[RMDB]
RNA sequence: GGGAACGACUCGAGUAGAGUCGAAAAUUUCUGGCCUGUGGGGCAAGGUGUUCAUCGUGGUCGGUGUGGCUCAUCAGGCUACGUGGCAGGCCUGGUUGGUAAUCGCCGUGAUUGUGAUUGCAAGCUUUGGUGCGUUCUUGUCCAUGCUGCGGUUGUACGAGUGCACUAAUUUCGAUUAGUGCACUCGAAAAGAAACAACAACAACAAC
Reactivity to 2A3 in 0.01 (KOAc 150mM, MgCl2 10mM, bicine 150mM(pH8.5), 24C), signal-to-noise 1, nucleotides 027 to 156: u150u100u010c020u000g040g000c000c000u120g060u120g010g020g000g000c020a000a050g120g000u030g040u070u190c070a070u020c100g000u040g020g000u150c000g040g000u070g040u070g070g000c010u010c150a050u070c000a010g000g010c040u030a020c020g010u040g040g000c050a030g000g040c000c020u000g020g000u040u050g000g000u090a060a030u040c060g000c000c100g070u100g010a150u130u230g010u000g040a090u030u080g010c120a130a110g030c000u150u080u050g000g000u040g000c000g120u110u020c000u040u120g040u000c000c000a080u060g000c010u020g000c060g070g000u120u180g010u110a010